Chemical mapping of a 177-nucleotide RNA with 2A3 and DMS. The 2A3 profile rests on 5,189 reads. For DMS, 2,057 sequencing reads were counted. For 2A3 the reverse transcriptase was SuperScript II with manganese.
[RMDB]
RNA sequence: GGGAACGACUCGAGUAGAGUCGAAAAGAUAUGGAAUAGGAUGGGAGUCGGUCUUCGGAAACGAAGACACGACGACGAUCAUCCCUAUUCCUAAGUCAAAACCAACCAUGGUUCGCCAUGGUUGGAAGAGAUUGCAUAUCUUCGGAUAUGCAAUCUCAAAAGAAACAACAACAACAAC
Reactivity to 2A3 in 0.01 (KOAc 150mM, MgCl2 10mM, bicine 150mM(pH8.5), 24C), signal-to-noise 1, nucleotides 027 to 126: g000a000u020a010u050g000g000a000a000u010a000g010g000a000u020g010g000g050a060g030u000c010g000g020u000c010u000u020c000g020g010a030a000a000c010g030a000a020g010a010c020a030c150g030a000c000g040a030c000g000a010u010c000a010u060c060c000c000u010a020u010u000c010c000u010a020a020g000u010c020a000a010a120a180c000c000a020a000c010c000a000u010g000g130u060u100c300g070c120c010a000u010g020g000u000u000g010g010a020a010
Reactivity to DMS in 0.01 (KOAc 150mM, MgCl2 10mM, bicine 150mM(pH8.5), 24C), signal-to-noise 2, nucleotides 027 to 126: g000a000u010a080u000g000g000a000a030u000a010g030g010a030u000g010g020g000a080g000u000c000g020g000u000c000u000u000c000g040g010a020a030a040c020g010a030a010g020a000c040a020c000g020a020c000g030a080c300g000a050u010c000a010u000c140c080c130u000a010u000u000c000c000u000a020a100g000u000c000a150a130a140a140c030c000a030a010c000c000a010u000g000g010u000u020c300g010c010c000a010u000g010g010u000u000g000g000a040a070